[RMDB]
RNA sequence: GGGAACGACUCGAGUAGAGUCGAAAAGCGCGCGAGAGGCGGGACGAGUGUUGGCCGUCGUCUUCCAGGACGGCGCGGACGGAGUCGGGGUGCAUACCGUGGUUCCACGGAGGUACUCUCCGCGCAGCGAGGCUUAUUGAUUCGUCAAUAAGCCUCGAAAAGAAACAACAACAACAAC
Reactivity to DMS in 0.01 (KOAc 150mM, MgCl2 10mM, bicine 150mM(pH8.5), 24C), signal-to-noise 9, nucleotides 027 to 126: g010c010g010c010g020c160g010a030g010a030g010g020c100g010g010g000a030c030g000a300g010u010g010u000u000g010g020c090c040g020u000c000g000u000c020u000u010c230c280a150g000g000a020c010g010g000c010g010c030g000g000a030c040g000g000a280g010u000c020g010g000g010g010u000g010c050a140u010a060c010c000g010u000g000g010u010u010c120c010a030c010g000g000a070g000g010u000a060c020u000c000u000c000c000g000c010g010c010a090g000
Reactivity to 2A3 in 0.01 (KOAc 150mM, MgCl2 10mM, bicine 150mM(pH8.5), 24C), signal-to-noise 2, nucleotides 027 to 126: g000c000g000c000g020c090g000a010g000a000g020g020c060g020g050g010a000c010g010a040g040u160g030u050u050g100g010c060c000g000u000c000g000u000c000u210u060c060c030a030g000g060a000c010g000g000c010g000c010g020g010a010c010g020g030a020g020u020c010g000g010g000g000u070g000c020a040u060a110c000c000g070u000g000g090u260u080c090c000a000c000g000g000a010g000g020u000a050c000u000c000u000c000c010g000c000g000c000a000g010